[RMDB]
RNA sequence: GGGAACGACUCGAGUAGAGUCGAAAAACGUUUUGGUUCGCUGGAAAAUAUUAGACGGCUGGUUACCCAGGAGAUGGUCACCAUACUGGUUGAUGGACUGUUCUCACUCAUCACCCUUUUGCUGCUGGGAAUGGAUAAGGUUCGCCUUAUCCAUUCCAAAAGAAACAACAACAACAAC
Reactivity to DMS in 0.01 (KOAc 150mM, MgCl2 10mM, bicine 150mM(pH8.5), 24C), signal-to-noise 3, nucleotides 027 to 126: a090c090g010u000u010u010u000g000g030u000u010c060g030c040u000g000g000a070a090a090a090u000a070u010u010a110g010a070c060g000g000c060u010g000g010u010u010a120c080c020c020a080g000g010a060g000a060u000g010g010u000c050a070c070c030a080u010a080c090u000g000g010u000u010g000a070u000g000g000a090c050u000g000u000u000c040u000c010a140c080u000c060a030u000c030a060c030c000c040u010u000u010u000g010c060u010g010c100u000g010
Reactivity to 2A3 in 0.01 (KOAc 150mM, MgCl2 10mM, bicine 150mM(pH8.5), 24C), signal-to-noise 2, nucleotides 027 to 126: a000c070g000u080u040u060u130g090g010u060u090c040g020c040u010g010g040a100a090a060a010u130a100u110u030a050g050a070c020g060g000c030u010g040g020u090u050a110c000c000c030a050g050g000a120g000a050u100g040g010u040c030a030c070c010a050u070a120c080u130g060g070u060u060g080a030u030g000g010a000c010u030g080u080u010c020u000c010a050c010u050c010a070u050c000a060c030c010c000u000u090u060u170g050c020u040g000c000u070g050